An RNA of 177 nucleotides, treated with 2A3 and DMS and read out base by base. Reactivities are given for positions 27 through 126. 2A3 adducts were read by reverse transcription with SuperScript II with manganese. In probing experiments dimethyl sulfate is read out at A N1 and C N3, which are open when not base-paired. Source: RMDB library TTRDEL, as collected in RNAgym. For DMS, 1,898 sequencing reads were counted. The RNA was probed in 150 mM KOAc, 10 mM MgCl2 and 150 mM bicine (pH 8.5) at 24 C.
RNA sequence: GGGAACGACUCGAGUAGAGUCGAAAAGAUAUGGAUGUUGUACCCAGCGCUGUUGAUGACCUCGGAAACGAGCAAGACAGCGAACUACUGGACAACAUCCUAAGUCAAACGGGUGUUCGCACCCGAACUGUAUCCAGAUGUUCGCAUCUGGAUACAGAAAAGAAACAACAACAACAAC
Reactivity to 2A3 in 0.01 (KOAc 150mM, MgCl2 10mM, bicine 150mM(pH8.5), 24C), signal-to-noise 4, nucleotides 027 to 126: g030a000u030a010u100g000g000a000u010g010u010u010g010u130a250c030c000c040a030g020c020g000c010u030g060u130u090g260a300u090g060a250c030c030u020c000g020g000a020a020a020c010g000a010g030c000a060a070g010a000c000a000g010c000g000a010a000c010u300a060c000u010g020g010a010c000a010a000c000a010u000c000c000u000a020a010g010u010c020a050a070a120c040g010g030g000u030g020u120u140c270g000c090a000c000c020c010g000a070a000
Reactivity to DMS in 0.01 (KOAc 150mM, MgCl2 10mM, bicine 150mM(pH8.5), 24C), signal-to-noise 2, nucleotides 027 to 126: g020a050u000a120u000g010g010a020u000g000u000u000g020u000a150c280c000c000a000g010c010g000c010u000g020u000u010g000a130u000g000a220c300c000u000c000g010g010a040a050a050c000g020a010g010c040a010a040g010a010c000a020g010c000g000a030a010c050u010a300c010u000g000g010a080c000a010a000c000a000u000c000c000u000a010a020g000u000c010a120a120a170c010g000g010g020u000g030u000u020c190g010c020a020c000c000c000g000a020a050